[RMDB]
RNA sequence: GGGAACGACUCGAGUAGAGUCGAAAAUUAUCCUUUCGCCUAGGGGAAAGUCCCCGGACCAUGGGCAGAGAGUGCCGCGUGCACACGCGCGUAGGCUUCCCCCGCAAGUCACUGUUAGCCCGCCAAGCAAGAUAACAGAGUUCGCUCUGUUAUCUUGAAAAGAAACAACAACAACAAC
Reactivity to 2A3 in 0.01 (KOAc 150mM, MgCl2 10mM, bicine 150mM(pH8.5), 24C), signal-to-noise 2, nucleotides 027 to 126: u040u020a100u130c000c000u000u050u080c060g020c020c020u070a060g010g000g000g080a010a120a110g190u180c030c000c000c010g010g010a030c030c040a080u080g020g060g000c140a020g040a000g000a000g070u110g030c010c010g000c010g030u010g000c020a070c020a040c270g040c000g020c000g000u040a230g000g000c000u040u060c020c010c000c000c000g000c040a050a030g050u080c040a000c080u050g030u100u060a010g040c000c000c000g000c020c020a040a020g080
Reactivity to DMS in 0.01 (KOAc 150mM, MgCl2 10mM, bicine 150mM(pH8.5), 24C), signal-to-noise 4, nucleotides 027 to 126: u010u010a100u010c060c010u000u000u000c090g010c020c030u010a100g000g000g000g000a090a100a200g010u000c010c000c010c070g000g000a060c100c070a050u010g020g010g010c030a120g000a080g010a030g010u000g010c020c010g010c020g020u000g010c040a130c240a090c240g000c010g020c020g020u000a060g060g000c020u000u000c010c020c000c050c040g000c120a090a090g020u000c050a070c050u000g010u000u010a120g010c010c000c010g020c080c100a070a100g010
Chemical mapping of a 177-nucleotide RNA with 2A3 and DMS. For 2A3 the reverse transcriptase was SuperScript II with manganese. For DMS, 4,018 sequencing reads were counted. The RNA was probed in 150 mM KOAc, 10 mM MgCl2 and 150 mM bicine (pH 8.5) at 24 C. It was measured as part of the RMDB library RFMREP. DMS adducts were read by reverse transcription with MarathonRT.